The record gives the reactivity of an RNA of 177 nucleotides to 2A3 and DMS.
It was measured as part of the RMDB library OK2TRN.
Reactivities are given for positions 27 through 126.
For 2A3, 4,987 sequencing reads were counted.
The RNA was probed in 150 mM KOAc, 10 mM MgCl2 and 150 mM bicine (pH 8.5) at 24 C.
RNA sequence: GGGAACGACUCGAGUAGAGUCGAAAAUUUCAGGGAUCAAAACCUUGCUACUAAAAAUGGAGGGCACAAAUCUGAGCAACAGCAUAAAACCACUUACCAUAGAUCAAGAAAAUGAUAUGUCUGGGGGAAGAGGAAUGAUAUUCGUAUCAUUCCUCUUAAAAGAAACAACAACAACAAC
Reactivity to 2A3 in 0.01 (KOAc 150mM, MgCl2 10mM, bicine 150mM(pH8.5), 24C), signal-to-noise 4, nucleotides 027 to 126: u070u060u040c040a020g000g010g060a080u080c060a030a040a070a120c010c000u020u040g030c020u060a140c010u070a040a130a110a020a020u080g030g010a020g020g010g000c080a000c030a050a120a040u050c050u070g020a010g060c020a010a060c000a030g040c020a020u110a100a090a010a040c030c010a050c050u040u060a070c030c000a060u060a060g050a050u100c030a040a020g120a100a150a020a050u100g020a030u050a040u160g070u000c030u060g000g000g010g010g000
Reactivity to DMS in 0.01 (KOAc 150mM, MgCl2 10mM, bicine 150mM(pH8.5), 24C), signal-to-noise 6, nucleotides 027 to 126: u010u000u010c040a040g000g000g010a060u000c100a080a090a110a070c040c020u000u000g030c080u010a060c090u000a040a070a070a110a130u000g010g020a060g010g000g020c050a040c090a070a070a090u000c050u000g000a110g010c070a050a050c060a030g000c060a080u000a030a080a110a100c040c010a050c070u010u010a070c050c040a080u000a060g010a060u000c060a040a090g000a060a040a080a070u000g000a060u000a050u000g000u000c050u000g010g010g000g000g010
2A3 adducts were read by reverse transcription with SuperScript II with manganese.